[RMDB]
Chemical mapping of a 177-nucleotide RNA with 2A3 and DMS. For DMS the reverse transcriptase was MarathonRT. For DMS, 1,495 sequencing reads were counted. The RNA was probed in 150 mM KOAc, 10 mM MgCl2 and 150 mM bicine (pH 8.5) at 24 C.
RNA sequence: GGGAACGACUCGAGUAGAGUCGAAAAGAUAUGGAGUCCCGUAGGGAGAACGGUGUCGGAAACGACAUUCGUUCAUCGAUCUACGGACUCCUAAGUCAAAGGCUUAGAUGCUUCGGCAUCUAAGCCAGAUCUUCUAGUGCUUCGGCACUAGAAGAUCAAAAGAAACAACAACAACAAC
Reactivity to 2A3 in 0.01 (KOAc 150mM, MgCl2 10mM, bicine 150mM(pH8.5), 24C), signal-to-noise 1, nucleotides 027 to 126: g040a000u050a010u100g000g000a000g000u050c150c070c050g000u000a010g020g040g050a240g000a020a000c000g010g030u000g020u020c000g010g030a030a020a020c000g020a020c030a020u300u290c070g010u010u010c010a050u140c020g080a090u030c000u010a000c000g010g000a000c010u000c010c000u000a000a000g000u000c020a100a100a170g010g000c000u010u020a000g000a000u000g000c050u070u090c290g160g000c010a010u000c000u000a000a000g000c000c010a010
Reactivity to DMS in 0.01 (KOAc 150mM, MgCl2 10mM, bicine 150mM(pH8.5), 24C), signal-to-noise 1, nucleotides 027 to 126: g000a010u010a210u030g000g020a010g010u010c100c090c180g010u000a020g000g000g030a050g040a010a000c000g000g030u000g030u000c010g000g010a040a030a150c000g000a020c000a000u020u010c020g020u020u000c000a220u000c210g000a120u000c000u000a010c010g000g000a010c000u010c000c000u000a000a040g000u000c010a080a180a100g000g010c030u000u000a000g010a040u000g000c000u010u000c200g030g000c010a000u000c000u000a000a000g030c000c010a010